[RMDB]
RNA sequence: GGGAACGACUCGAGUAGAGUCGAAAAGAGCAUCAGCAGGGCACCGCCCAGCGGCGGCGCGCUGGCUCCGGGGAGCAACAGGAACAGCAGGCCGCCCAGGGCCAGCAGGAAACCGAGCAGCGCCUGAGGGUACCGUAGUAUUCGUACUACGGUACCCAAAAGAAACAACAACAACAAC
Reactivity to DMS in 0.01 (KOAc 150mM, MgCl2 10mM, bicine 150mM(pH8.5), 24C), signal-to-noise 1, nucleotides 027 to 126: g020a060g040c040a090u000c030a050g000c140a080g000g000g050c020a050c110c070g020c010c000c020a100g050c180g010g010c000g010g040c000g060c130g000c010u000g000g000c080u000c000c060g000g000g000g000a110g000c130a100a070c140a100g010g000a050a250c040a090g000c050a070g010g000c000c020g010c010c000c000a080g000g030g000c020c030a040g000c020a160g020g010a080a080a090c030c010g000a090g010c050a050g030c110g010c070c020u000g000a130